[RMDB]
RNA sequence: GGGAACGACUCGAGUAGAGUCGAAAAUCAGGCGAUCCAACAAGCUAGAAAACACCUAGUUCAGCGCGAUGGUACCAAGUUGUCACACAUUAAGUGCUGCACGUUGGGUAGUGACAACACGGCAAUCAUGUGACGGGUUGUUCGCAACCCGUCACAUAAAAGAAACAACAACAACAAC
Reactivity to DMS in 0.01 (KOAc 150mM, MgCl2 10mM, bicine 150mM(pH8.5), 24C), signal-to-noise 1, nucleotides 027 to 126: u000c130a010g020g020c040g000a060u010c010c070a050a000c030a180a120g000c060u000a000g000a040a040a120a120c300a070c110c020u000a000g000u000u000c030a110g010c040g000c020g010a110u000g010g000u000a070c020c020a090a190g020u020u000g010u000c070a020c020a030c070a130u000u000a070a100g020u000g000c100u000g060c170a020c260g040u000u010g020g020g000u000a130g020u000g000a020c000a060a000c010a090c070g000g000c040a120a070u020c080